This 177-nucleotide RNA was probed chemically with DMS and 2A3. Values cover nucleotides 27 to 126. DMS adducts were read by reverse transcription with MarathonRT. The reactions ran in a buffer of 150 mM KOAc, 10 mM MgCl2 and 150 mM bicine (pH 8.5), at 24 C. High DMS reactivity at an A or C suggests that its Watson-Crick edge is free.
RNA sequence: GGGAACGACUCGAGUAGAGUCGAAAAGAUAUGGACCCACUGCACGGGAGAAACCCAUCGGAAACGAUGGAGUUUCUUUGAUCGUGUUGGGUCCUAAGUCAAACCUGAUCUGUUCGCAGAUCAGGAACAUCUUUGCUAAGUUCGCUUAGCAAAGAUGAAAAGAAACAACAACAACAAC
Reactivity to DMS in 0.01 (KOAc 150mM, MgCl2 10mM, bicine 150mM(pH8.5), 24C), signal-to-noise 5, nucleotides 027 to 126: g000a020u000a050u010g000g000a030c010c000c000a130c300u000g000c000a010c010g010g000g000a020g020a010a010a000c000c000c000a010u000c000g010g010a020a020a050c000g010a020u000g000g000a080g000u000u000u000c000u000u000u010g010a040u010c000g000u000g010u000u000g010g030g020u000c000c000u000a000a070g000u000c010a110a130a230c010c010u000g000a010u000c000u000g000u000u020c240g040c010a010g000a010u010c000a010g000g000a060a120
Reactivity to 2A3 in 0.01 (KOAc 150mM, MgCl2 10mM, bicine 150mM(pH8.5), 24C), signal-to-noise 4, nucleotides 027 to 126: g010a010u020a010u050g000g000a000c000c010c020a010c120u090g030c020a000c010g030g000g030a100g000a010a000a010c000c000c000a000u000c000g000g030a010a010a010c000g010a000u000g010g010a040g010u000u000u030c000u120u100u080g020a020u010c010g000u000g000u060u040g010g010g000u000c000c000u010a010a010g010u000c020a100a060a150c000c000u000g000a000u000c000u010g100u130u150c300g020c150a000g000a010u000c000a000g000g000a010a020